[RMDB]
RNA sequence: GGGAACGACUCGAGUAGAGUCGAAAAGUGGAUGUAGGGUCACUAUCACGGGAUCGCUGCUGGUUGCCGUCCGUCGGCCAGCGGUUAACCUAAAACGGGCUGGUCCUUCGGUGCGCUUUGCACGCCGUGUUGCCGCGGGACGAGACCAAAACGGCGCCUCCAACUACCGGUUCGCCGGUAGUUGGAGAAAAGAAACAACAACAACAAC
Reactivity to 2A3 in 0.01 (KOAc 150mM, MgCl2 10mM, bicine 150mM(pH8.5), 24C), signal-to-noise 1, nucleotides 027 to 156: g050u030g050g000a080u070g040u300a050g030g020g050u000c010a020c120u080a120u210c050a060c170g030g010g020a070u150c120g000c000u010g010c000u000g030g000u000u020g000c000c010g000u010c000c000g000u010c000g000g000c010c000a000g020c020g000g000u030u160a080a110c000c050u060a100a100a000a000c000g000g000g060c000u000g000g050u040c000c000u000u020c000g000g000u030g030c060g000c080u000u130u190g010c070a050c000g020c010c010g000u000g000u020u120g030c000c010g000c030g000g000g010a010c030g010a000g020a010c050c000a060a020a000a020c020g000g000c040g020c010